[RMDB]
Chemical mapping of a 177-nucleotide RNA with DMS.
The reactions ran in a buffer of 150 mM KOAc, 10 mM MgCl2 and 150 mM bicine (pH 8.5), at 24 C.
It was measured as part of the RMDB library TTRINS.
RNA sequence: GGGAACGACUCGAGUAGAGUCGAAAAGAUAUGGACUCUUGGAUCUCGGCAUCUGUUGGAGGACGGUAUCGGAAACGAUACCCGGUCCUAUGAAGACAGGAUGCCGAGAUCCAAGAGUCCUAAGUCAGUAAGUCUGUAAGUUCGCUUACAGACUUACAAAAGAAACAACAACAACAAC
Reactivity to DMS in 0.01 (KOAc 150mM, MgCl2 10mM, bicine 150mM(pH8.5), 24C), signal-to-noise 2, nucleotides 027 to 126: g000a060u000a300u000g000g000a020c000u000c000u000u000g000g000a010u000c010u020c000g000g000c000a000u000c010u000g000u000u010g000g000a020g000g030a040c000g010g020u000a010u000c000g000g000a110a090a160c010g000a010u000a000c060c060c300g040g000u010c010c000u000a160u020g020a170a300g000a000c000a020g030g000a010u000g020c000c000g020a010g000a000u000c010c000a000a030g000a010g000u000c000c010u000a000a070g010u010c030a200